[RMDB]
RNA sequence: GGGAACGACUCGAGUAGAGUCGAAAAGAUAUGGACUCGAGGAUGACAUGCGUAGGGUCGGAAACGACCUGGGCGCAACAGCAUCUCGAGUCCUAAGUCAAAAGAUUGCUGCUUCGGCAGCAAUCAACGUACGCUUGAGGUUCGCCUCAAGCGUACGAAAAGAAACAACAACAACAAC
Reactivity to 2A3 in 0.01 (KOAc 150mM, MgCl2 10mM, bicine 150mM(pH8.5), 24C), signal-to-noise 2, nucleotides 027 to 126: g000a000u020a000u070g020g010a000c010u010c020g020a020g300g080a050u000g000a060c190a300u220g000c000g070u050a030g030g020g050u020c020g000g010a000a010a000c020g000a040c080c020u080g130g300g030c080g000c030a130a110c160a160g020c010a020u010c010u000c010g030a030g000u000c000c000u010a010a000g000u000c000a000a000a020a110g010a010u030u000g020c000u000g030c000u000u130c300g120g000c000a020g030c010a000a000u000c000a000a010
Reactivity to DMS in 0.01 (KOAc 150mM, MgCl2 10mM, bicine 150mM(pH8.5), 24C), signal-to-noise 2, nucleotides 027 to 126: g010a030u000a130u010g000g000a010c000u000c000g000a080g000g000a050u000g010a060c140a140u010g010c020g000u010a300g000g000g030u000c000g010g000a050a060a080c000g000a010c000c000u020g000g000g010c010g010c000a010a050c300a120g000c010a010u000c000u000c020g000a040g000u000c000c000u000a000a070g000u000c020a130a060a090a050g010a010u000u000g000c000u000g010c000u010u000c270g010g010c000a020g000c000a000a000u010c000a040a090